Notes
An RNA of 177 nucleotides, treated with 2A3 and DMS and read out base by base. The data come from the RNA Mapping Database (RMDB), library OK1LIB. Conditions: 150 mM KOAc, 10 mM MgCl2 and 150 mM bicine (pH 8.5), 24 C. The DMS profile rests on 1,240 reads.
[RMDB]
RNA sequence: GGGAACGACUCGAGUAGAGUCGAAAAAGCCUCGAUGUCGACAACGCAAAUCCUUGAUAACAUAGACAUGGACGAGGACGCCCAUUUUUAAUGUGAUGGGGAGUAGUUAACAAGUAACAUCAGGAAAAGUAUCACUGGCUUUCGAGCCAGUGAUACUAAAAGAAACAACAACAACAAC
Reactivity to 2A3 in 0.01 (KOAc 150mM, MgCl2 10mM, bicine 150mM(pH8.5), 24C), signal-to-noise 3, nucleotides 027 to 126: a000g040c000c010u020c110g010a000u000g030u070c160g040a050c010a240a000c070g060c130a110a060a090u000c000c020u010u010g120a110u120a160a040c010a080u120a070g090a020c050a040u080g050g010a000c000g030a040g100g010a060c010g040c000c000c000a000u070u050u020u030u050a190a300u100g020u000g040a060u050g000g020g000g020a020g000u080a050g010u040u090a100a100c090a160a000g060u060a050a000c000a010u010c020a020g000g150a160a000a020
Reactivity to DMS in 0.01 (KOAc 150mM, MgCl2 10mM, bicine 150mM(pH8.5), 24C), signal-to-noise 2, nucleotides 027 to 126: a040g000c000c000u000c030g010a030u010g000u000c030g010a080c300a080a050c190g000c070a040a080a170u070c110c030u000u000g000a100u020a110a060c140a000u000a010g000a000c060a190u020g000g050a230c000g000a180g000g000a150c040g070c040c060c010a000u000u000u000u050u000a100a100u000g000u000g000a030u000g030g000g000g000a140g000u000a050g000u000u000a090a140c110a040a200g030u020a130a080c080a000u010c030a050g000g000a120a030a040